RNA sequence: GGGAACGACUCGAGUAGAGUCGAAAAUUCCUUGCUGCCUCGUGCCGGUGUGGGGACAGAUGGUGCUACAGAAUGAGCAGAGGAAAUCCAGACAGGUUGUUUUCCAUUUGUCUUGGGGCCUGUCUCUUAAUUAUUUAAAAUUCGUUUUAAAUAAUUAAAAAGAAACAACAACAACAAC
Reactivity to 2A3 in 0.01 (KOAc 150mM, MgCl2 10mM, bicine 150mM(pH8.5), 24C), signal-to-noise 2, nucleotides 027 to 126: u020u000c000c000u010u110g010c020u050g000c000c010u020c050g050u060g080c020c010g070g050u100g030u050g050g020g020g040a050c010a020g070a020u080g050g030u030g030c020u060a070c010a100g150a120a120u100g020a060g060c000a020g030a050g100g010a050a070a060u020c040c010a020g000a010c000a010g000g050u060u020g050u070u180u080u040c000c010a040u080u060u140g080u060c020u020u020g010g000g010g000c010c000u000g000u030c000u000c000u010
Reactivity to DMS in 0.01 (KOAc 150mM, MgCl2 10mM, bicine 150mM(pH8.5), 24C), signal-to-noise 2, nucleotides 027 to 126: u010u010c000c000u000u010g010c050u000g010c030c030u000c060g030u010g010c070c010g000g010u000g050u010g010g040g000g000a050c030a060g000a040u030g030g000u010g000c060u020a110c100a130g020a160a080u020g020a060g000c070a120g010a110g000g000a050a090a070u040c040c060a050g000a030c060a070g000g000u010u010g000u020u010u050u030c020c010a070u020u010u020g010u010c090u020u010g000g000g010g030c020c010u010g000u020c010u010c070u010